[RMDB]
RNA sequence: GGGAACGACUCGAGUAGAGUCGAAAAGGAUGCUCGUUCGCGAGCAUCCACUGAGAUAGCCACAAUAAAGAUUAAGUCUUCCUACUCGAGACAGGAUGUCUAUGCUCCUGGCCUUCGGGCCAGGAAAUUUAACUUGCAACUUCGGUUGCAAGUUAAAAAAAGAAACAACAACAACAAC
Reactivity to DMS in 0.01 (KOAc 150mM, MgCl2 10mM, bicine 150mM(pH8.5), 24C), signal-to-noise 1, nucleotides 027 to 126: g010g000a010u000g010c020u000c010g000u000u020c270g000c010g000a010g000c000a010u000c000c000a050c100u000g000a220g000a050u000a070g010c060c070a080c170a090a130u010a060a030a080g000a060u010u010a110a150g010u000c030u000u010c020c000u000a010c010u010c010g000a010g000a170c120a070g000g000a160u000g010u000c030u000a090u020g000c120u000c000c000u000g000g030c000c020u000u010c200g000g030g010c050c010a010g000g000a000a010a050